[RMDB]
RNA sequence: GGGAACGACUCGAGUAGAGUCGAAAAUCAUUCAAGUUUCUGCCCUAUCAGCUUGAUGGUAGUGUAUUGGCCUACCAUGGCGUUAACGGGUAACGGAGAAUUAGGGUUCGAUUCCGGAGAGGGAGCCUCCGCCAGAAUAAUUCGUUAUUCUGGCGGAAAAAGAAACAACAACAACAAC
Reactivity to 2A3 in 0.01 (KOAc 150mM, MgCl2 10mM, bicine 150mM(pH8.5), 24C), signal-to-noise 5, nucleotides 027 to 126: u140c020a020u100u090c040a060a050g040u000u040u040c060u050g000c010c000c000u030a080u040c070a050g050c000u080u130g280a030u020g040g020u010a040g010u070g040u150a240u160u280g250g040c020c000u000a010c000c000a020u050g030g000c020g020u020u060a050a040c090g010g010g010u010a040a020c040g050g020a040g040a060a070u090u120a130g080g040g010u050u060c040g020a110u120u000c030c010g030g010a040g000a020g020g020g010a010g030c000c010
Reactivity to DMS in 0.01 (KOAc 150mM, MgCl2 10mM, bicine 150mM(pH8.5), 24C), signal-to-noise 3, nucleotides 027 to 126: u010c040a130u020u020c050a070a150g000u010u010u000c090u000g020c000c010c010u010a090u010c220a100g020c000u010u000g010a030u010g000g020u000a010g000u070g030u030a120u050u010g010g000c070c000u000a010c010c000a000u010g010g000c010g010u030u030a070a170c230g000g020g020u030a040a050c100g000g030a170g020a030a030u000u030a110g000g000g020u000u010c060g000a090u020u020c050c020g000g000a190g010a140g000g000g020a170g010c070c080